Source information
Chemical mapping of a 177-nucleotide RNA with 2A3 and DMS. The reactions ran in a buffer of 150 mM KOAc, 10 mM MgCl2 and 150 mM bicine (pH 8.5), at 24 C.
RNA sequence: GGGAACGACUCGAGUAGAGUCGAAAAGCUUCGCAUGCUUCCGUUGAGUAACAACACUACGUACGGCUGGUGCAUGAGAGAGCUACGCCGUGCUUUGUCCUUUGGCAUACAUCUCUACGAUUGGGACCACUACUCCGUCAUUCGUGACGGAGUAGUGAAAAGAAACAACAACAACAAC
Reactivity to 2A3 in 0.01 (KOAc 150mM, MgCl2 10mM, bicine 150mM(pH8.5), 24C), signal-to-noise 9, nucleotides 027 to 126: g010c020u070u070c040g010c050a030u070g020c010u080u040c020c010g010u030u070g070a070g060u110a120a080c080a070a010c020a040c100u120a040c070g040u040a010c010g030g000c020u070g000g070u070g000c050a110u200g020a020g010a010g000a010g070c000u030a030c080g010c000c010g040u020g000c000u100u060u090g030u070c020c000u080u090u120g040g010c030a030u060a080c040a130u070c030u000c020u090a060c090g110a120u060u100g020g000g040a030c000
Reactivity to DMS in 0.01 (KOAc 150mM, MgCl2 10mM, bicine 150mM(pH8.5), 24C), signal-to-noise 3, nucleotides 027 to 126: g000c050u010u010c080g000c060a020u000g010c040u010u030c030c000g010u010u000g010a110g000u000a050a030c280a060a090c170a060c050u020a070c130g000u010a030c010g000g000c300u020g010g010u000g010c020a080u000g000a110g000a080g000a130g020c010u000a100c250g000c010c000g010u000g000c050u000u000u010g010u000c030c010u000u010u010g000g010c030a080u000a030c110a060u000c030u000c030u010a080c070g000a100u020u020g000g000g040a090c100